[RMDB]
RNA sequence: GGGAACGACUCGAGUAGAGUCGAAAAGGAUGCUCCUCCCGAUUCCGUCCAUCCCCCCCCCCAGGAGGUCCCCCCAGGAAUGGCGGGACCCCACUCUGCAGGGUCCGCGUUCCAUUCUUUCUUACCUACCCAUCGGCCUUCGGGCCGAUGAAAAGAAACAACAACAACAAC
Reactivity to DMS in 0.01 (KOAc 150mM, MgCl2 10mM, bicine 150mM(pH8.5), 24C), signal-to-noise 2, nucleotides 027 to 129: g000g000a000u000g010c130u020c020c010u000c000c070c060g090a110u030u000c010c030g020u060c020c060a160u100c000c000c000c000c000c000c000c000c000c000a070g020g000a020g020g010u000c000c030c000c000c030c100a150g040g060a080a000u010g000g020c220g000g100g000a000c060c020c000c060a040c180u030c080u020g060c170a170g060g000g270u020c000c000g000c030g080u000u060c000c000a030u000u000c030u000u000u000c080u040u000a130c090c040u030a100c150c000
Structure probing data (DMS) for a 170-nucleotide construct. DMS (dimethyl sulfate) methylates the pairing face of unpaired adenines and cytosines. Source: RMDB library 15KLIB, as collected in RNAgym. Values cover nucleotides 27 to 129. Reactivities are rounded to 0.1 and cut off at 0 and 3.